Notes
Structure probing data (DMS and 2A3) for a 207-nucleotide construct. Source: RMDB library OK3TST, as collected in RNAgym. The RNA was probed in 150 mM KOAc, 10 mM MgCl2 and 150 mM bicine (pH 8.5) at 24 C. DMS adducts were read by reverse transcription with MarathonRT.
[RMDB]
RNA sequence: GGGAACGACUCGAGUAGAGUCGAAAAGUGGUGUUCGCGCCGAAACCGUCGAACACCGGGUUCGUUACCGCCGGCGCGGCAGGCGAAUCCGAGAGCGUCACCCUCGCCGAAGUGCCGGCGCUCAUCGCUGACGGUGUCCUCACCGACCUGCAGGGCACUGUACGACUAUGUUCGCAUAGUCGUACAGAAAAGAAACAACAACAACAAC
Reactivity to DMS in 0.01 (KOAc 150mM, MgCl2 10mM, bicine 150mM(pH8.5), 24C), signal-to-noise 1, nucleotides 027 to 156: g000u000g010g030u000g050u000u000c010g030c020g040c030c020g060a090a110a070c230c050g020u020c000g000a060a020c020a020c040c000g000g020g000u000u000c020g000u000u010a040c060c030g000c020c010g030g020c110g000c000g030g020c120a180g000g010c000g010a040a140u000c040c020g000a050g010a090g020c030g010u010c090a100c040c010c050u000c030g050c060c020g020a250a250g100u000g020c010c000g000g000c020g020c010u000c100a110u000c040g030c050u020g000a070c020g000g020u000g020u020c030c060u000c060a130c050c060g040a050c050c010u000g000c080a080g030g030g030c010a170
Reactivity to 2A3 in 0.01 (KOAc 150mM, MgCl2 10mM, bicine 150mM(pH8.5), 24C), signal-to-noise 3, nucleotides 027 to 156: g190u130g000g000u000g000u010u020c020g000c000g000c050c050g040a040a030a030c060c010g180u290c060g060a010a000c000a010c000c000g000g010g000u020u050c010g020u050u040a030c000c060g000c000c000g020g000c010g010c010g030g020c100a070g000g000c020g010a010a040u050c080c070g050a080g020a010g080c060g080u090c070a150c060c010c010u000c000g000c010c020g010a040a010g010u040g020c000c000g010g000c000g000c000u000c010a170u150c030g030c060u060g000a050c010g000g060u020g080u120c010c030u100c030a050c000c010g130a140c030c020u060g000c020a050g010g000g000c010a000